[RMDB]
RNA sequence: GGGAACGACUCGAGUAGAGUCGAAAAAAAUCAAUGAUUGAGGCUAUUCUCGAUUACGAUUAUUCUGAAUACCUCGCAACGCAGUUACUGAAGCGCAAACAGCAAGGUGUAUGGAAGGCCAAAGGCUUGGCGCUAAUCUGCGACGAUAAAGAAGGUGAUUAUCUUAUGCUUUCGAGCAUAAGAUAAUAAAAGAAACAACAACAACAAC
Reactivity to 2A3 in 0.01 (KOAc 150mM, MgCl2 10mM, bicine 150mM(pH8.5), 24C), signal-to-noise 9, nucleotides 027 to 156: a000a000a000u080c070a070a070u240g020a020u030u040g000a010g040g030c120u170a110u250u120c020u030c020g020a010u020u040a030c060g030a030u030u050a070u140u060c030u030g050a070a030u060a110c010c000u020c020g020c030a020a050c020g000c010a010g010u070u110a120c070u200g080a100a030g000c000g000c020a080a110a170c040a060g020c030a060a150g000g030u080g030u110a110u140g090g070a050a040g100g000c010c020a080a100a030g090g000c030u050u080g040g000c000g000c010u010a020a060u010c000u010g010c010g130a160c040g020a050u100a120a100a030g120a050a010g030g020u070g020
Reactivity to DMS in 0.01 (KOAc 150mM, MgCl2 10mM, bicine 150mM(pH8.5), 24C), signal-to-noise 6, nucleotides 027 to 156: a060a030a070u010c050a090a110u000g010a080u000u000g000a040g010g010c080u000a120u000u000c000u000c010g010a030u000u000a090c180g000a130u000u000a080u000u000c030u000g010a120a090u000a060c020c010u000c010g010c020a090a100c040g020c020a070g020u000u000a280c170u020g020a110a120g020c020g020c010a080a060a090c120a120g000c050a080a070g010g030u000g000u000a110u000g010g020a110a090g020g010c020c010a060a080a120g030g010c030u000u000g020g020c010g010c010u000a040a060u010c020u000g010c030g010a100c050g010a080u010a050a050a120g000a090a070g040g030u000g010
The data come from the RNA Mapping Database (RMDB), library OK3TST. The record gives the reactivity of an RNA of 207 nucleotides to 2A3 and DMS. 2A3 adducts were read by reverse transcription with SuperScript II with manganese. For 2A3, 17,569 sequencing reads were counted.